Notes
The data come from the RNA Mapping Database (RMDB), library RFMREP. This 177-nucleotide RNA was probed chemically with 2A3 and DMS. DMS adducts were read by reverse transcription with MarathonRT.

RNA sequence: GGGAACGACUCGAGUAGAGUCGAAAAAUGGGACUUGUCACUGCCUGUCUCCUCCCUCUCCAGCAGCGACUGGAUUCUGGAGUCCAUCUAGAGGGUCUUGGGAGGGAUGUGACUGUUGGGAAGCCGACUUACUAUCUGGGUUCGCCCAGAUAGUAAGAAAAGAAACAACAACAACAAC
Reactivity to 2A3 in 0.01 (KOAc 150mM, MgCl2 10mM, bicine 150mM(pH8.5), 24C), signal-to-noise 1, nucleotides 027 to 126: a030u120g030g020g070a070c030u110u080g150u150c020a010c020u050g040c020c000u010g040u000c040u000c030c010u040c020c000c000u000c040u040c000c010a040g010c020a040g120c030g180a220c090u020g000g040a040u100u030c050u110g070g040a050g050u040c060c010a050u000c020u020a010g010a030g150g050g000u000c050u090u060g040g010g010a040g000g000g000a040u060g020u000g000a020c000u070g110u210u100g010g000g000a040a000g010c010c000g010a040
Reactivity to DMS in 0.01 (KOAc 150mM, MgCl2 10mM, bicine 150mM(pH8.5), 24C), signal-to-noise 2, nucleotides 027 to 126: a070u000g010g010g010a080c030u000u000g010u000c010a050c040u000g010c050c010u010g010u010c010u010c010c040u000c000c000c010u000c100u010c010c010a030g020c070a140g020c190g020a060c080u000g000g010a090u010u000c070u010g010g010a060g010u010c150c120a080u000c010u000a080g000a050g010g000g010u020c080u000u000g020g010g010a050g010g000g010a030u010g010u010g000a050c010u020g000u010u020g000g010g000a060a050g010c020c030g000a240
The RNA was probed in 150 mM KOAc, 10 mM MgCl2 and 150 mM bicine (pH 8.5) at 24 C.